[RMDB]
Record summary:
Chemical mapping of a 177-nucleotide RNA with DMS and 2A3. Reactivities are rounded to 0.1 and cut off at 0 and 3. The reactions ran in a buffer of 150 mM KOAc, 10 mM MgCl2 and 150 mM bicine (pH 8.5), at 24 C. For 2A3 the reverse transcriptase was SuperScript II with manganese.
RNA sequence: GGGAACGACUCGAGUAGAGUCGAAAAGUAAAACCGAAAUCCCACUUUAUGACCGAAUUAAUCUAAACUCAGAGAGAUAAGGUAAUGACACAGAGGUUGUACUCACUUUGACGAUGAUUAACCAUCAGUGAAGUACUCAGUUCGCUGAGUACUUCACAAAAGAAACAACAACAACAAC
Reactivity to DMS in 0.01 (KOAc 150mM, MgCl2 10mM, bicine 150mM(pH8.5), 24C), signal-to-noise 2, nucleotides 027 to 126: g000u020a000a060a080a170c220c160g000a040a060a130u020c040c000c000a220c130u050u000u010a050u050g050a060c010c020g000a120a090u000u000a040a130u000c010u000a080a060a100c110u040c150a010g000a020g020a300g000a040u030a050a180g000g060u040a080a040u050g000a100c230a010c090a000g010a130g000g000u000u000g040u000a080c010u000c230a010c020u000u010u000g030a100c080g000a010u000g000a140u000u010a060a100c110c030a040u000c040a090
Reactivity to 2A3 in 0.01 (KOAc 150mM, MgCl2 10mM, bicine 150mM(pH8.5), 24C), signal-to-noise 2, nucleotides 027 to 126: g060u060a020a050a000a010c080c010g010a120a030a020u000c000c000c000a010c010u020u140u120a210u200g060a020c000c000g020a150a160u020u000a010a020u140c030u110a000a040a170c110u120c060a000g010a000g020a000g010a050u030a060a020g040g000u040a050a040u070g020a000c060a040c050a050g030a060g160g000u050u050g000u030a110c070u060c040a050c000u080u040u130g040a050c090g000a010u030g030a030u110u030a060a050c030c020a010u090c030a020